[RMDB]
RNA sequence: GGGAACGACUCGAGUAGAGUCGAAAAGGAGCGUAGCUUGUAUAUUUUUUGAGCUGUGAUAGUGUCCGGAAACGCCUCAACCCAUCGAGGCCUGGUGAGAACCCCGUCUUUUUUGGCGGGGUUUUGCGUACUGUGGCUCUUUCGAGAGCCACAGUACAAAAGAAACAACAACAACAAC
Reactivity to DMS in 0.01 (KOAc 150mM, MgCl2 10mM, bicine 150mM(pH8.5), 24C), signal-to-noise 1, nucleotides 027 to 126: g000g010a190g000c020g000u020a010g000c030u000u000g030u030a020u050a040u000u000u010u050u000u040g000a050g000c000u020g010u000g000a110u030a050g030u010g040u000c000c020g000g000a090a070a210c100g000c000c000u000c010a090a130c040c020c020a120u090c070g000a030g000g000c010c030u000g010g010u050g000a080g010a000a020c000c000c000c000g000u000c000u000u000u010u000u010u000g000g020c000g000g030g000g000u000u000u000u000g000c270
This 177-nucleotide RNA was probed chemically with DMS.
Values cover nucleotides 27 to 126.
The RNA was probed in 150 mM KOAc, 10 mM MgCl2 and 150 mM bicine (pH 8.5) at 24 C.